[RMDB]
RNA sequence: GGGAACGACUCGAGUAGAGUCGAAAAUUGUUCACCCACUAACAAGGAACGUGAGCUGGGUUUAGACCGUCGUGAGACAGGUUAGUUUUACCCUACUGUUGUCAAUUAUUUACGUAAUAGUAGCAUGUAUCUACAGUUUAUUCGUAAACUGUAGAUAAAAAGAAACAACAACAACAAC
Reactivity to 2A3 in 0.01 (KOAc 150mM, MgCl2 10mM, bicine 150mM(pH8.5), 24C), signal-to-noise 8, nucleotides 027 to 126: u060u050g030u080u060c030a040c010c030c000a020c030u070a070a040c060a100a050g180g010a130a040c090g060u050g030a020g010c070u040g020g030g000u010u040u100a040g020a020c020c000g020u020c000g030u060g040a070g000a040c080a110g010g030u010u020a010g060u010u050u050u120a060c010c000c000u030a030c020u030g030u050u010g070u040c030a030a070u140u070a090u120u170u100a050c070g020u040a020a070u040a160g040u000a010g030c140a070u110g040
Reactivity to DMS in 0.01 (KOAc 150mM, MgCl2 10mM, bicine 150mM(pH8.5), 24C), signal-to-noise 9, nucleotides 027 to 126: u010u010g010u000u010c070a080c010c010c030a140c070u010a090a080c180a120a090g010g010a110a090c190g010u000g000a040g010c100u000g010g000g010u000u000u010a090g010a020c020c010g020u000c010g000u020g010a220g000a020c010a070g040g000u000u000a060g010u000u010u000u000a090c030c030c000u000a060c050u000g010u000u000g010u000c060a080a110u010u010a110u010u010u010a060c120g010u000a050a050u010a080g000u000a020g010c180a090u010g010

This 177-nucleotide RNA was probed chemically with 2A3 and DMS. The data come from the RNA Mapping Database (RMDB), libraries RFM100 and RFMREP. Values cover nucleotides 27 to 126. Reactivities are rounded to 0.1 and cut off at 0 and 3. Conditions: 150 mM KOAc, 10 mM MgCl2 and 150 mM bicine (pH 8.5), 24 C.